An RNA of 177 nucleotides, treated with DMS and 2A3 and read out base by base. Values are in units of 0.01, from 0 to 300, in steps of 10.
RNA sequence: GGGAACGACUCGAGUAGAGUCGAAAACUUAACGCGUUCGCGCGUUAAGAAACAACAUAAACAUCGAGUUGACGAUGACACAAAUACGGUCAGUGUAGACGGAAAGCAUUCGCUUCGGCGAAUGCAAUCUUUUCCUGUUGUUCGCAACAGGAAAAGAAAAAGAAACAACAACAACAAC
Reactivity to DMS in 0.01 (KOAc 150mM, MgCl2 10mM, bicine 150mM(pH8.5), 24C), signal-to-noise 3, nucleotides 027 to 126: c010u000u000a000a000c000g010c000g000u000u000c240g060c020g030c010g000u010u000a000a000g000a110a070a170c130a040a030c060a110u000a160a160a120c050a070u000c020g010a100g000u000u010g000a150c070g000a040u000g000a060c110a070c150a070a030a100u010a090c140g010g000u010c040a010g010u000g000u000a070g010a040c090g000g000a050a040a110g000c000a000u000u000c000g060c000u000u030c110g050g000c000g020a020a000u000g010c010a020a050
Reactivity to 2A3 in 0.01 (KOAc 150mM, MgCl2 10mM, bicine 150mM(pH8.5), 24C), signal-to-noise 2, nucleotides 027 to 126: c000u010u010a010a000c000g020c010g000u040u030c190g010c000g030c000g090u000u000a000a010g000a010a040a010c050a050a000c030a080u250a130a150a000c020a070u040c040g020a060g040u080u050g150a110c020g050a050u080g030a010c010a000c020a120a180a020u230a080c150g080g020u040c060a070g070u030g070u210a040g030a090c050g000g040a100a050a020g000c000a000u000u000c030g000c010u000u020c220g070g000c000g000a000a000u000g000c000a000a000
Conditions: 150 mM KOAc, 10 mM MgCl2 and 150 mM bicine (pH 8.5), 24 C. 2A3 adducts were read by reverse transcription with SuperScript II with manganese. The data come from the RNA Mapping Database (RMDB), library M2PK50. DMS adducts were read by reverse transcription with MarathonRT. For 2A3, 1,611 sequencing reads were counted.